RNA sequence: GGGAACGACUCGAGUAGAGUCGAAAAAAGCAACAGCAGGAAGAACUGGGAGUAUCGCGUGAGAGACGCCCUGGACAGUUUACAACUUCAGGCUUGCCGAGGGGAGCGCAGUAGCAAGAGGCGGACCUUGGAGCCGUAGAGUGUCCUGGACAGCUUCCCGCUAUGAUUAUUUCGAUAAUCAUAGCGGAAAAGAAACAACAACAACAAC
Reactivity to 2A3 in 0.01 (KOAc 150mM, MgCl2 10mM, bicine 150mM(pH8.5), 24C), signal-to-noise 1, nucleotides 027 to 156: a010a000g030c040a020a060c030a040g060c010a030g000g020a040a010g010a080a040c050u020g050g020g030a060g050u110a110u240c020g000c010g050u020g010a120g000a020g010a030c030g030c010c000c020u000g000g000a000c000a030g010u050u190u030a070c060a220a020c020u100u030c020a050g000g000c020u080u160g020c030c000g030a040g000g060g010g000a100g150c010g030c010a040g060u170a100g060c110a050a040g050a040g130g090c030g000g000a170c010c030u020u100g000g010a000g050c050c000g070u040a010g000a020g090u030g000u020c010c000u000g000g040a030c030a080g030c010u030u030c040
Conditions: 150 mM KOAc, 10 mM MgCl2 and 150 mM bicine (pH 8.5), 24 C. An RNA of 207 nucleotides, treated with 2A3 and read out base by base. For 2A3 the reverse transcriptase was SuperScript II with manganese. Values cover nucleotides 27 to 156.